Conditions: 150 mM KOAc, 10 mM MgCl2 and 150 mM bicine (pH 8.5), 24 C. Chemical mapping of a 177-nucleotide RNA with DMS and 2A3.

[RMDB]
RNA sequence: GGGAACGACUCGAGUAGAGUCGAAAAGGGCCGCGGUCGAGGAGUUGGGCUCCGAGGCGAUGUUCGGCACGGCUGAGGGAUCGGCUGGCAUUUGCUUGCGACGUGCCCACGAUGUCCGCAGCGGCGCACCGAAUGUUUGUUUCGACAAACAUUCGGUAAAAGAAACAACAACAACAAC
Reactivity to DMS in 0.01 (KOAc 150mM, MgCl2 10mM, bicine 150mM(pH8.5), 24C), signal-to-noise 3, nucleotides 027 to 126: g010g010g010c000c000g020c020g000g030u000c240g000a110g010g010a270g000u010u010g000g030g020c010u000c000c010g010a080g000g020c000g010a020u000g010u000u010c050g020g010c040a120c020g010g000c040u000g000a140g010g010g010a120u000c020g010g010c000u000g000g000c000a050u000u000u000g030c010u000u000g010c100g030a130c300g000u000g000c000c000c020a060c030g010a140u010g000u010c020c060g030c030a120g020c000g000g010c010g010c100
Reactivity to 2A3 in 0.01 (KOAc 150mM, MgCl2 10mM, bicine 150mM(pH8.5), 24C), signal-to-noise 4, nucleotides 027 to 126: g060g060g000c030c020g010c010g030g020u200c050g030a080g020g020a080g080u220u040g030g010g000c010u000c020c020g010a020g000g010c010g010a010u030g010u140u300c050g070g000c170a160c090g020g000c040u140g110a190g040g160g050a130u080c010g010g000c010u030g000g020c010a000u030u040u300g010c010u030u100g220c030g040a100c060g060u040g000c000c010c000a000c010g060a070u150g090u090c020c010g000c030a010g000c000g030g000c030g000c040
For 2A3, 4,660 sequencing reads were counted. The DMS profile rests on 3,983 reads.